An RNA of 177 nucleotides, treated with 2A3 and DMS and read out base by base.
It was measured as part of the RMDB library RFM100.
Conditions: 150 mM KOAc, 10 mM MgCl2 and 150 mM bicine (pH 8.5), 24 C.
For 2A3 the reverse transcriptase was SuperScript II with manganese.
RNA sequence: GGGAACGACUCGAGUAGAGUCGAAAAGAAAGAAAGAAAGAAAGUCUGUGAUGAAUUGCUUUGACUUCUGACACCUCGUAUGAAAACUGCACGUGCAGUCUGAUUAUUUAGCAAGACUGAGGCUUAAUCUUGAAGCGUGAUUCGUCACGCUUCAAGAAAAAGAAACAACAACAACAAC
Reactivity to 2A3 in 0.01 (KOAc 150mM, MgCl2 10mM, bicine 150mM(pH8.5), 24C), signal-to-noise 2, nucleotides 027 to 126: g030a010a080a000g080a010a080a000g090a050a010a000g040a020a040a000g000u010c080u080g100u070g170a070u070g030a030a120u040u070g030c000u130u000u020g030a120c000u000u000c000u040g030a010c000a050c040c000u000c030g040u110a050u120g020a000a050a080a000c000u100g020c050a030c120g200u210g000c020a010g000u010c010u000g020a060u000u050a120u060u070u180a090g060c050a010a000g040a040c020u020g010a010g010g020c030u040u070a010a010
Reactivity to DMS in 0.01 (KOAc 150mM, MgCl2 10mM, bicine 150mM(pH8.5), 24C), signal-to-noise 3, nucleotides 027 to 126: g010a130a100a030g030a120a070a070g000a030a050a060g010a090a070a070g010u000c000u000g030u010g010a070u010g030a050a070u010u030g000c040u000u000u010g000a090c070u000u000c000u000g000a090c130a170c040c040u000c110g000u000a060u010g000a090a100a070a030c080u000g040c000a170c290g020u040g030c000a000g000u000c030u020g000a130u000u010a050u010u030u040a110g020c120a080a010g010a050c060u010g000a040g000g010c030u010u010a030a150